[RMDB]
RNA sequence: GGGAACGACUCGAGUAGAGUCGAAAAGACGUGGAGGUUCCGCGCCCUCCUUUGCGCGUAAGUACGUCGAAAUUCGGUGCUUUGGAUCGCACCGUUAGAUCCAUUUGAUAUCCGCUUCGUGCCGCGGUUGGGCAUUUACACUUACCCGAAAGGGGAAGGGAUGGGUAUUAUUCGUAAUACCCAUCCCAAAAGAAACAACAACAACAAC
Reactivity to DMS in 0.01 (KOAc 150mM, MgCl2 10mM, bicine 150mM(pH8.5), 24C), signal-to-noise 2, nucleotides 027 to 156: g010a100c030g020u000g000g010a140g020g010u000u000c040c050g020c050g000c100c020c010u020c050c000u000u020u000g040c010g010c040g050u010a060a090g020u000a090c070g020u000c010g010a060a020a190u000u000c070g030g030u000g000c030u000u010u030g010g020a100u020c210g000c040a140c080c030g010u000u000a060g030a100u000c030c020a170u020u020u000g000a110u000a070u000c040c030g020c140u000u020c030g020u010g010c060c050g000c050g010g000u010u000g010g010g040c070a130u000u020u000a110c080a070c100u010u000a170c010c010c010g010a110a080a250g010g000g010g000a090a100
Reactivity to 2A3 in 0.01 (KOAc 150mM, MgCl2 10mM, bicine 150mM(pH8.5), 24C), signal-to-noise 3, nucleotides 027 to 156: g030a000c020g040u090g020g040a090g050g070u120u040c020c000g000c000g010c030c000c010u070c030c030u060u030u110g040c010g000c000g030u080a050a050g020u020a040c030g000u020c030g040a090a010a010u100u080c010g000g000u020g010c020u110u100u120g110g050a070u090c040g000c040a060c030c000g000u000u050a040g000a010u000c020c020a110u060u060u110g130a120u070a040u130c010c060g000c010u030u040c060g040u030g010c020c010g020c020g050g000u070u040g010g000g020c020a030u090u040u080a040c060a000c020u030u090a040c020c000c010g010a110a010a010g010g010g020g000a000a120